[RMDB]
RNA sequence: GGGAACGACUCGAGUAGAGUCGAAAACGGUUACGCCUUCUUUACCGUUUUCAAGGAAGGUACUCGGCCAUGCUAAGGGAAGCAUUAUUCCUUAGGCGCAUGUCGCCGCCAGCAUGGUGUGAGGGGAAAAAGUAUGCUGGGUUCGCCCAGCAUACAAUCCGCUAUAACUGUUCGCAGUUAUAGCGGAAAAAGAAACAACAACAACAAC
Reactivity to 2A3 in 0.01 (KOAc 150mM, MgCl2 10mM, bicine 150mM(pH8.5), 24C), signal-to-noise 2, nucleotides 027 to 156: c010g010g030u060u050a010c050g030c020c010u020u020c020u030u110u060a070c020c030g070u110u080u050u110c050a040a010g060g000a020a000g000g010u060a050c010u000c000g030g000c000c010a000u000g000c000u050a080a100g010g010g010a020a010g020c060a200u140u120a120u150u190c010c020u030u070a060g000g000c010g000c050a190u250g090u300c050g000c020c000g000c020c030a010g000c000a000u020g000g020u080g120u120g040a040g000g010g010g080a000a150a000a050a000g040u010a000u000g000c020u010g000g010g070u010u030c070g100c030c000c000a000g000c000a000u000a000c000a010a000
Reactivity to DMS in 0.01 (KOAc 150mM, MgCl2 10mM, bicine 150mM(pH8.5), 24C), signal-to-noise 1, nucleotides 027 to 156: c010g010g010u000u000a030c080g020c050c040u000u020c000u000u000u000a010c020c020g000u010u000u020u000c050a070a020g030g000a040a030g040g030u000a060c000u000c020g000g000c010c020a030u000g020c000u000a180a210g000g010g000a030a060g020c100a150u000u000a160u010u000c000c030u000u000a110g040g000c010g080c040a110u000g000u000c010g030c000c000g010c070c110a050g030c030a000u000g000g000u000g000u000g010a030g010g000g030g000a040a110a030a080a130g000u000a050u000g020c000u000g000g000g010u000u030c300g010c000c000c000a040g010c000a000u000a000c000a040a200
Notes:
Conditions: 150 mM KOAc, 10 mM MgCl2 and 150 mM bicine (pH 8.5), 24 C. This 207-nucleotide RNA was probed chemically with 2A3 and DMS. For DMS, 2,687 sequencing reads were counted.